[RMDB]
RNA sequence: GGGAACGACUCGAGUAGAGUCGAAAAGAAGAGCAGUCAGAUAAUCUUGUGCAGUAUGAAUGCUCGUAACUCCAUAGCACAAGUAGAUGUAGAUAACUUUAAUCUCGCAUAGCGGAGGAGCCGCAGAAUUAUGAUUAGGUUUCGACCUAAUCAUAAUAAAAGAAACAACAACAACAAC
Reactivity to DMS in 0.01 (KOAc 150mM, MgCl2 10mM, bicine 150mM(pH8.5), 24C), signal-to-noise 9, nucleotides 027 to 126: g010a130a090g000a020g010c010a020g010u010c030a100g000a140u030a090a100u020c010u000u000g000u010g010c010a130g010u010a060u010g010a040a040u010g000c010u000c040g020u020a060a090c100u010c030c050a090u010a110g010c000a010c010a010a010g010u020a070g010a080u010g010u010a030g010a050u010a070a120c170u020u020u020a080a060u010c010u000c040g020c100a080u020a100g010c020g010g000a200g010g010a100g010c010c020g010c030a110g010a080
Reactivity to 2A3 in 0.01 (KOAc 150mM, MgCl2 10mM, bicine 150mM(pH8.5), 24C), signal-to-noise 9, nucleotides 027 to 126: g140a070a000g000a000g010c020a010g040u060c030a010g040a170u130a130a120u110c010u010u010g000u000g000c010a040g070u100a050u080g060a090a030u040g010c010u000c030g030u030a040a050c030u020c070c020a050u060a010g000c010a000c010a020a010g020u040a040g040a080u070g050u120a020g020a080u060a090a040c030u090u100u170a110a070u030c020u010c020g050c070a070u090a090g010c020g020g030a110g040g030a020g100c000c000g010c010a000g080a060
The data come from the RNA Mapping Database (RMDB), library OK1LIB.
Chemical mapping of a 177-nucleotide RNA with DMS and 2A3.
For DMS the reverse transcriptase was MarathonRT.
The RNA was probed in 150 mM KOAc, 10 mM MgCl2 and 150 mM bicine (pH 8.5) at 24 C.
For 2A3, 39,053 sequencing reads were counted.
2A3 adducts were read by reverse transcription with SuperScript II with manganese.